Structure probing data (2A3 and DMS) for a 207-nucleotide construct.
2A3 adducts were read by reverse transcription with SuperScript II with manganese.
The DMS profile rests on 4,814 reads.

RNA sequence: GGGAACGACUCGAGUAGAGUCGAAAAACAAUCCAUGCUCCAUGUUAGCUGCUGUUGCUGAAGCUGUAGAUGCACCCUUCUACCUAGGGAAGGAGGUGUGGUCCCAGACCUGUCACCUUCUCGGUCAGCCAACCUCUGGAGGAGAGGAGAGGAAAUGCGAUACGAUACGUUUCGACGUAUCGUAUCGAAAAGAAACAACAACAACAAC
Reactivity to 2A3 in 0.01 (KOAc 150mM, MgCl2 10mM, bicine 150mM(pH8.5), 24C), signal-to-noise 4, nucleotides 027 to 156: a000c060a030a040u040c020c010a040u090g070c020u010c010c000a030u160g000u020u030a020g000c030u020g000c010u030g020u170u110g010c020u020g050a060a030g020c100u130g020u190a060g020a080u130g000c010a080c010c010c000u020u050c060u140a150c030c030u060a030g040g000g040a040a020g000g030a010g000g030u030g030u030g020g040u030c130c130c010a010g000a020c000c000u090g070u160c010a010c010c000u010u050c010u020c060g010g050u090c040a000g000c010c000a000a020c000c020u010c010u020g020g000a020g000g040a030g010a030g010g030a020g000a030g020g090a060a040a090u210g030
Reactivity to DMS in 0.01 (KOAc 150mM, MgCl2 10mM, bicine 150mM(pH8.5), 24C), signal-to-noise 2, nucleotides 027 to 156: a040c040a130a120u000c040c050a120u000g000c010u000c010c010a070u000g000u000u010a090g050c000u010g040c030u000g000u000u000g020c070u010g010a110a110g010c020u010g000u000a090g010a110u000g000c050a160c020c020c020u010u000c050u010a120c090c090u000a090g030g030g020a100a050g020g010a000g020g010u000g010u020g000g010u000c020c080c130a140g010a100c020c020u010g020u010c010a040c010c000u000u000c010u000c030g010g000u010c040a080g000c040c080a040a070c000c010u000c010u000g010g010a100g010g000a060g010a100g020g000a000g000a110g010g010a090a080a130u000g010